This 207-nucleotide RNA was probed chemically with DMS and 2A3.
RNA sequence: GGGAACGACUCGAGUAGAGUCGAAAAUAGAAGAAAGUAAGUAUGUUGAAUCUAAACUAGUGGAUAUUUGUGAUCGGAUAGUAUUCAAGUCAAAGAAAUAUGAAGGUCCGUUUACUACAACUAGUGAAGUCGUCGAUAUGUUAUCUACAUAUUUACCAUCUCAUUGUAGUUUCGACUACAAUGAGAUAAAAGAAACAACAACAACAAC
Reactivity to DMS in 0.01 (KOAc 150mM, MgCl2 10mM, bicine 150mM(pH8.5), 24C), signal-to-noise 3, nucleotides 027 to 156: u000a130g010a140a110g010a160a070a110g000u000a060a090g000u010a040u010g000u000u020g010a090a270u000c030u000a130a180a060c000u000a020g050u000g000g020a140u000a080u000u010u010g010u000g020a030u000c010g000g000a070u000a160g040u000a060u000u000c040a080a210g000u000c110a090a120a180g000a060a040a100u000a050u010g010a070a170g020g010u000c030c020g010u000u010u010a050c020u000a070c060a090a060c010u010a020g010u000g010a070a100g030u000c070g020u010c060g010a050u000a030u010g010u000u020a100u010c140u000a090c010a030u000a010u010u000u000a030c010c030
Reactivity to 2A3 in 0.01 (KOAc 150mM, MgCl2 10mM, bicine 150mM(pH8.5), 24C), signal-to-noise 8, nucleotides 027 to 156: u140a010g070a070a010g040a140a080a010g050u150a090a010g020u040a120u150g000u000u010g010a030a030u010c020u020a120a070a050c000u000a010g020u010g040g070a090u050a140u280u170u160g010u010g000a000u010c010g000g000a000u020a050g090u060a110u010u030c030a070a040g140u050c040a110a080a070g060a040a110a020u140a050u100g050a060a030g110g010u000c000c000g000u010u010u010a010c010u000a020c010a100a010c010u000a000g010u010g040a040a020g070u130c060g010u010c030g020a010u010a010u050g040u050u100a090u140c090u080a010c000a000u000a000u010u020u010a010c020c010

For DMS the reverse transcriptase was MarathonRT.